[RMDB]
The record gives the reactivity of an RNA of 177 nucleotides to 2A3 and DMS. The data come from the RNA Mapping Database (RMDB), library OK2TST. Values are in units of 0.01, from 0 to 300, in steps of 10. The RNA was probed in 150 mM KOAc, 10 mM MgCl2 and 150 mM bicine (pH 8.5) at 24 C.
RNA sequence: GGGAACGACUCGAGUAGAGUCGAAAAGGUAUCAGACCGCUGAAUGACGGAUCCGGCGGAUCCACCAUCAGGAUCCAAGAUUCGUUCUACCAGAGAAUAAGGUUGCUGGCUGGGAUCCUGACAUAUGCACAUGAGAUACGUUCGCGUAUCUCAUGUGAAAAGAAACAACAACAACAAC
Reactivity to 2A3 in 0.01 (KOAc 150mM, MgCl2 10mM, bicine 150mM(pH8.5), 24C), signal-to-noise 3, nucleotides 027 to 126: g100g000u080a070u150c040a030g030a090c010c000g000c020u040g040a150a100u100g010a010c010g010g030a020u040c030c000g030g050c020g050g000a040u020c020c000a020c050c020a090u040c030a020g010g000a000u000c010c010a020a010g010a020u060u050c030g020u010u070c040u070a050c020c010a010g050a010g080a210a180u240a280a070g200g070u150u120g060c050u020g050g000c030u050g010g000g040a010u010c000c030u000g000a000c020a050u300a100u250g050
Reactivity to DMS in 0.01 (KOAc 150mM, MgCl2 10mM, bicine 150mM(pH8.5), 24C), signal-to-noise 5, nucleotides 027 to 126: g010g020u000a070u010c100a110g020a180c010c020g010c010u010g000a150a070u010g000a030c040g000g000a020u000c010c020g000g030c100g000g000a060u000c020c040a090c170c100a150u010c070a020g010g010a020u000c000c000a130a110g000a020u000u010c030g020u000u000c090u000a100c020c010a040g010a110g010a120a200u000a130a080g030g000u000u010g000c050u000g000g010c060u000g000g000g000a030u010c010c000u000g000a050c300a070u020a070u010g010